[RMDB]
RNA sequence: GGGAACGACUCGAGUAGAGUCGAAAAUUGCUGAUGGCAGGACGCAGCACCCGGAUGGGUCAACCCAAAGCGUUGCUGCCACUUGGUGGGAUGCCGCUGUGCCGACACGCUGCUCAAACGCUGGUUGAAAGAUGCAUAAGUUCGCUUAUGCAUCUUUAAAAGAAACAACAACAACAAC
Reactivity to DMS in 0.01 (KOAc 150mM, MgCl2 10mM, bicine 150mM(pH8.5), 24C), signal-to-noise 9, nucleotides 027 to 126: u010u010g010c050u000g000a120u000g010g010c010a020g000g010a030c040g010c010a110g020c150a060c010c010c000g010g020a110u020g010g010g020u000c090a110a130c040c070c070a070a110a140g000c020g010u000u000g010c010u000g000c010c010a020c060u000u000g010g020u000g010g010g010a090u010g010c040c030g010c050u000g010u000g010c030c020g000a100c080a060c080g010c020u000g010c030u000c060a070a070a110c120g010c050u000g010g010u000u010g000
Reactivity to 2A3 in 0.01 (KOAc 150mM, MgCl2 10mM, bicine 150mM(pH8.5), 24C), signal-to-noise 3, nucleotides 027 to 126: u120u100g020c030u060g020a190u040g050g000c030a020g030g000a010c020g020c020a060g020c040a050c010c000c010g100g120a230u300g070g010g020u070c040a100a250c030c010c050a060a020a020g020c020g020u030u110g130c000u010g000c000c010a010c040u020u080g050g000u040g020g020g020a060u120g030c020c010g020c040u050g040u090g060c010c020g060a030c000a010c080g030c010u050g000c010u020c050a050a050a040c050g000c040u080g010g110u040u030g080

An RNA of 177 nucleotides, treated with DMS and 2A3 and read out base by base. DMS adducts were read by reverse transcription with MarathonRT. Reactivities are given for positions 27 through 126. The reactions ran in a buffer of 150 mM KOAc, 10 mM MgCl2 and 150 mM bicine (pH 8.5), at 24 C.